[RMDB]
RNA sequence: GGGAACGACUCGAGUAGAGUCGAAAACGGAACACAGUGAGUGGACGGAAUAAAUCCCCUUCCCACCUCCCCACUGUCCACUCACUGUCUUCCUAAGAGGAAAUAUAAAUCGGGGGUGGGAAGGGGACCCACGUACGUACUUCGGUACGUACGUGGGAAAAGAAACAACAACAACAAC
Reactivity to 2A3 in 0.01 (KOAc 150mM, MgCl2 10mM, bicine 150mM(pH8.5), 24C), signal-to-noise 4, nucleotides 027 to 126: c030g010g000a010a000c000a000c000a010g000u000g000a000g000u000g000g000a000c020g010g080a080a080u120a150a080a100u110c000c000c000c000u000u000c000c000c000a010c000c000u040c040c090c030c010a090c010u010g010u060c000c010a010c000u000c010a000c000u000g000u000c000u010u000c000c000u010a070a000g040a040g170g170a050a120a000u300a040u080a040a140a080u300c130g000g000g000g010g000u010g000g010g000a000a000g000g000g000g000a000

An RNA of 177 nucleotides, treated with 2A3 and read out base by base. Values are in units of 0.01, from 0 to 300, in steps of 10. Conditions: 150 mM KOAc, 10 mM MgCl2 and 150 mM bicine (pH 8.5), 24 C.